[RMDB]
RNA sequence: GGGAACGACUCGAGUAGAGUCGAAAACAGGGAACUGAAUUGUGGAUACCUAGCCUCACUAGCACGCCCGUCUUUUGCGACCACUUUGCGUAUGCAAUCCAUCCAUGCAAACAAGCGUGCAUUUUACGCAUUGCGUUAAAUUCGUUUAACGCAAUGCAAAAGAAACAACAACAACAAC
Reactivity to DMS in 0.01 (KOAc 150mM, MgCl2 10mM, bicine 150mM(pH8.5), 24C), signal-to-noise 6, nucleotides 027 to 126: c090a080g020g010g010a130a130c090u000g010a070a080u010u000g010u000g010g000a100u000a130c060c040u010a120g000c020c020u000c080a080c130u010a090g010c030a030c050g010c010c040c040g020u000c080u000u010u010u010g020c050g010a090c090c060a040c130u000u000u000g010c040g000u000a050u000g020c030a040a040u000c100c060a080u010c070c110a080u010g000c020a020a050a060c170a110a190g010c020g010u000g020c030a090u010u000u000u010a100c220
Reactivity to 2A3 in 0.01 (KOAc 150mM, MgCl2 10mM, bicine 150mM(pH8.5), 24C), signal-to-noise 6, nucleotides 027 to 126: c040a020g020g040g050a040a040c060u060g080a210a120u190u120g040u070g060g020a040u090a200c000c010u010a050g060c020c010u050c010a100c090u090a050g000c010a000c020g000c000c020c010g050u070c070u050u160u080u110g040c050g020a030c000c030a060c000u040u020u040g000c020g030u140a070u190g010c020a030a040u020c010c000a000u030c020c020a050u120g010c020a020a030a060c010a100a030g000c000g010u010g000c020a030u070u100u070u100a080c070
The record gives the reactivity of an RNA of 177 nucleotides to DMS and 2A3. It was measured as part of the RMDB library OK2TST. The reactions ran in a buffer of 150 mM KOAc, 10 mM MgCl2 and 150 mM bicine (pH 8.5), at 24 C. Reactivities are given for positions 27 through 126. DMS adducts were read by reverse transcription with MarathonRT. The 2A3 profile rests on 9,781 reads.